[RMDB]
RNA sequence: GGGAACGACUCGAGUAGAGUCGAAAAGCCGAUAUUUUGGUCAAUCUGCGCCAGCCAUUGUUCGACAUCCGUUUCAUCGUCAACGGUGGCACGCAAAGGAUAUGCAGUUCUCCAGUGCGAGAGCACGGCUAGCGUACCGAUUCGUCGGUACGCUAGCAAAAGAAACAACAACAACAAC
Reactivity to DMS in 0.01 (KOAc 150mM, MgCl2 10mM, bicine 150mM(pH8.5), 24C), signal-to-noise 1, nucleotides 027 to 126: g010c100c080g000a070u020a000u000u030u010u060g000g000u020c020a030a020u000c060u000g000c100g000c120c140a270g000c000c000a030u000u000g000u000u000c080g000a070c000a150u050c120c140g040u010u000u010c070a070u140c190g000u000c010a000a050c040g000g040u010g000g000c040a140c190g000c010a000a020a080g020g010a080u040a020u000g020c000a080g010u000u000c000u000c010c010a100g010u020g010c000g040a120g000a140g020c020a040c140g000
Reactivity to 2A3 in 0.01 (KOAc 150mM, MgCl2 10mM, bicine 150mM(pH8.5), 24C), signal-to-noise 5, nucleotides 027 to 126: g050c010c020g020a060u070a190u060u220u070u100g070g010u070c020a020a080u010c020u050g000c020g000c040c130a070g000c020c000a020u000u010g010u020u030c130g000a000c010a050u060c070c050g040u120u170u110c100a130u120c110g010u020c000a010a000c000g010g020u000g000g000c000a000c020g020c000a030a070a030g060g010a010u060a040u250g050c040a020g020u020u000c030u000c000c020a050g020u020g010c010g030a090g010a000g010c010a010c010g000
Source information: The record gives the reactivity of an RNA of 177 nucleotides to DMS and 2A3. Source: RMDB library OK1LIB, as collected in RNAgym. Conditions: 150 mM KOAc, 10 mM MgCl2 and 150 mM bicine (pH 8.5), 24 C. 2A3 adducts were read by reverse transcription with SuperScript II with manganese. For 2A3, 3,954 sequencing reads were counted.